[RMDB]
RNA sequence: GGGAACGACUCGAGUAGAGUCGAAAAAGGUGUUUCGACACCUCUGAGUCCUAAGUCAUGUAGAGGAUCCCAGGCUUGGAUUUACAUCGGAAACGAUGUUGUCAGCCUGGCGAUCUACCCACCUACAUGAUAUGGAGGUUAUAUGAUUCGUCAUAAAUCUGUCUCAACCUUUCGAGGUUGAGACAGAAAAAGAAACAACAACAACAAC
Reactivity to 2A3 in 0.01 (KOAc 150mM, MgCl2 10mM, bicine 150mM(pH8.5), 24C), signal-to-noise 1, nucleotides 027 to 156: a000g030g000u090g000u070u210u140c110g160a010c000a000c110c000u070c090u090g160a050g280u010c000c010u040a240a020g000u010c000a010u000g000u000a000g000a010g000g000a000u020c000c000c000a000g000g060c040u210u220g240g000a080u300u240u100a000c010a020u000c020g000g130a110a130a120c040g000a000u000g000u000u000g000u000c000a000g000c000c000u000g000g000c000g010a000u000c000u000a000c020c000c010a060c000c000u000a010c000a000u000g000a000u000a130u090g010g000a010g110g010u210u080a210u010a010u140g130a080u070u170c220g090u090c160a090u230a230a140a020